[RMDB]
RNA sequence: GGGAACGACUCGAGUAGAGUCGAAAAAUAUCGAUCUGUCCGCGGCGGAGAUCCAACUGGUCAACGAGGUGGGUCGCGAGCAGACGUUGGCCCGGGCGCUGUACCCGGUGCUGGACCGCUACGACUACAUGGCCUCUGAAUUCGUUCAGAGGCCAUGAAAAGAAACAACAACAACAAC
Reactivity to DMS in 0.01 (KOAc 150mM, MgCl2 10mM, bicine 150mM(pH8.5), 24C), signal-to-noise 1, nucleotides 027 to 126: a100u000a080u000c010g020a090u000c040u000g010u000c000c020g040c130g000g000c020g000g000a300g000a060u000c000c020a060a060c100u010g000g000u000c220a100a110c090g020a060g000g020u000g000g010g020u000c030g010c020g000a090g000c010a010g000a020c040g000u000u030g000g040c020c000c000g030g000g020c020g010c180u000g020u020a150c000c000c000g000g000u010g040c020u000g010g000a100c030c010g010c060u000a040c150g000a080c080u000a160